[RMDB]
RNA sequence: GGGAACGACUCGAGUAGAGUCGAAAACAAUCAGUCGAUCAAGCCAGGUGACAUCGUCCGAUUCCGUUGCCACGGCGACAACUACUACGUGCUGGUCAACGGCAAAGUCGUCGUCUCGUGGACCGACACCAGCGCGGCCGUGUCGAAAGGUGCCGGGCGCCGAAUGGAAAUUCGUUUCCAUUCGGCGAAAAGAAACAACAACAACAAC
Reactivity to 2A3 in 0.01 (KOAc 150mM, MgCl2 10mM, bicine 150mM(pH8.5), 24C), signal-to-noise 1, nucleotides 027 to 156: c030a010a010u120c050a010g090u050c010g060a030u080c020a060a060g050c000c050a010g000g070u040g010a030c020a070u020c030g030u040c020c000g030a020u110u100c040c000g050u070u070g000c000c000a000c010g050g000c010g010a020c030a040a020c000u200a020c000u050a030c080g080u020g000c010u030g020g050u110c120a070a010c030g050g000c020a010a040a120g030u050c000g030u010c010g030u000c070u000c030g130u150g020g040a030c000c000g020a010c020a000c030c000a000g000c080g000c020g070g000c000c010g060u060g070u030c020g030a050a110a090g040g000u030g020c060c060g000g020g040